RNA sequence: GGGAACGACUCGAGUAGAGUCGAAAACUAUGGGCUGACUGCCGCUCGAUGCCAGGAGGUCCUUGAGCUCCGGGUUUUGCUCCAGCCUCAUGGUCAGGGCCUUCUUUGACGCCUCCGCCAAGAGGUGAUAUGAUAGGGAUUUCGAUCCCUAUCAUAUAAAAGAAACAACAACAACAAC
Reactivity to 2A3 in 0.01 (KOAc 150mM, MgCl2 10mM, bicine 150mM(pH8.5), 24C), signal-to-noise 5, nucleotides 027 to 126: c020u030a140u150g040g000g000c020u030g040a150c060u070g050c040c020g030c030u040c040g070a060u150g030c010c020a010g020g010a020g020g070u080c040c000u020u070g040a020g020c010u050c080c040g100g040g000u050u070u110u140g030c020u000c030c010a020g010c000c010u050c020a050u100g010g020u050c050a040g020g010g020c020c000u070u060c040u110u050u130g040a030c050g010c010c000u020c020c020g070c040c010a050a030g010a000g010g010u040g020
Reactivity to DMS in 0.01 (KOAc 150mM, MgCl2 10mM, bicine 150mM(pH8.5), 24C), signal-to-noise 9, nucleotides 027 to 126: c060u000a070u010g010g000g010c020u000g000a150c070u000g010c060c150g000c050u000c060g010a110u010g020c040c050a070g000g000a110g000g010u000c040c050u000u010g000a070g010c030u000c190c140g010g000g010u000u010u000u000g010c030u000c030c080a130g000c020c010u010c060a130u000g010g000u000c060a120g000g000g000c020c040u000u000c040u000u000u000g010a180c120g010c010c010u000c040c110g000c090c130a110a150g000a030g000g010u000g000